This 177-nucleotide RNA was probed chemically with DMS.
Reactivities are rounded to 0.1 and cut off at 0 and 3.
RNA sequence: GGGAACGACUCGAGUAGAGUCGAAAAUAACGGACAGUGUAGGUUCUGGAGAUCAGCCCAAGGAAAGCUCCAGGAAUGUUCAGGACAAUGCUUCAAGGUGGUUCCUAGAGUCUAUGCAUUUAGGAACCUAUUGGCUUUCGUUCGCGAAAGCCAAUAGAAAAGAAACAACAACAACAAC
Reactivity to DMS in 0.01 (KOAc 150mM, MgCl2 10mM, bicine 150mM(pH8.5), 24C), signal-to-noise 2, nucleotides 027 to 126: u010a130a130c140g000g000a030c060a050g020u000g010u000a020g010g000u010u000c020u020g000g000a060g000a060u020c060a140g030c060c010c020a130a110g030g010a060a070a150g000c020u000c000c010a020g010g000a030a030u010g000u010u010c030a080g010g010a120c120a080a080u000g020c080u000u000c110a080a070g020g000u010g000g020u000u000c000c000u000a010g000a020g010u010c090u000a020u010g010c080a210u000u000u000a050g000g000a030a030c010

The reactions ran in a buffer of 150 mM KOAc, 10 mM MgCl2 and 150 mM bicine (pH 8.5), at 24 C. Reactivities are given for positions 27 through 126.